[RMDB]
RNA sequence: GGGAACGACUCGAGUAGAGUCGAAAAGUUGGCUGGAGAUGAUAAGUAUGAUUAUAUAUUGGAUAGUGUGUACUUGUUCUUAGUGUUUACAUGGCAGACUGCCAUGGAUAUCUGGCAGCAAACCUUGGAUGGUAAUACGCUUAAGAGUAUUGAAGUGCUUGGACAUUGUGUUCGCACAAUGUCCAAGAAAAGAAACAACAACAACAAC
Reactivity to DMS in 0.01 (KOAc 150mM, MgCl2 10mM, bicine 150mM(pH8.5), 24C), signal-to-noise 2, nucleotides 027 to 156: g030u000u000g020g050c020u010g010g000a170g000a090u000g000a110u000a040a140g020u000a040u010g010a050u000u000a120u010a130u000a160u010u010g030g010a060u000a080g040u000g030u010g040u000a030c050u010u000g000u020u010c040u000u000a060g010u010g020u000u000u000a060c000a070u000g000g000c000a170g000a190c120u000g020c020c000a010u000g040g030a120u000a050u030c130u010g010g010c020a060g020c020a040a140a060c040c010u000u000g020g030a070u010g050g030u010a030a030u000a060c030g030c050u000u000a080a120g010a060g020u000a070u000u000g000a060a110g010u000g010
Reactivity to 2A3 in 0.01 (KOAc 150mM, MgCl2 10mM, bicine 150mM(pH8.5), 24C), signal-to-noise 2, nucleotides 027 to 156: g020u030u020g050g000c040u030g130g000a060g000a060u080g030a020u040a030a060g030u050a060u060g040a030u130u010a050u030a020u000a030u300u060g030g000a020u020a040g030u030g030u010g000u020a020c020u010u060g020u080u060c010u040u080a030g020u060g000u090u090u050a030c030a080u020g020g000c050a030g110a280c050u100g000c000c000a000u020g020g000a010u040a030u120c020u010g040g020c000a000g000c020a100a000a050c000c000u040u030g050g010a050u080g030g000u020a080a000u120a060c040g000c090u110u030a100a020g030a000g130u090a110u050u110g060a080a010g000u000g120

Conditions: 150 mM KOAc, 10 mM MgCl2 and 150 mM bicine (pH 8.5), 24 C. Chemical mapping of a 207-nucleotide RNA with DMS and 2A3. DMS adducts were read by reverse transcription with MarathonRT. High DMS reactivity at an A or C suggests that its Watson-Crick edge is free. For 2A3 the reverse transcriptase was SuperScript II with manganese.